Overview: Chemical mapping of a 177-nucleotide RNA with DMS.
RNA sequence: GGGAACGACUCGAGUAGAGUCGAAAAGGUCGCAUUGCAGGUCUCUCUGGCUAGUGGCUGCGGAGCGGGUGCUCAUAUACCGCCAGUUUUGAAUGCUCUCUGGGAGGCCUUUGUCUGUGCGUCGGCGAUUACGUUGCUGUUUCGACAGCAACGUAAUAAAAGAAACAACAACAACAAC
Reactivity to DMS in 0.01 (KOAc 150mM, MgCl2 10mM, bicine 150mM(pH8.5), 24C), signal-to-noise 2, nucleotides 027 to 126: g010g010u000c010g020c020a030u010u000g010c040a030g010g030u000c000u000c010u000c010u010g010g000c090u010a080g010u010g020g010c010u010g020c180g010g000a040g020c020g000g020g020u010g020c190u000c170a100u010a080u010a060c100c040g000c020c010a070g000u010u000u010u010g000a130a070u000g000c010u010c200u010c100u000g000g010g000a040g020g000c000c010u000u020u010g000u010c010u000g000u000g010c040g020u000c030g000g000c140g010
The reactions ran in a buffer of 150 mM KOAc, 10 mM MgCl2 and 150 mM bicine (pH 8.5), at 24 C. For DMS, 2,779 sequencing reads were counted.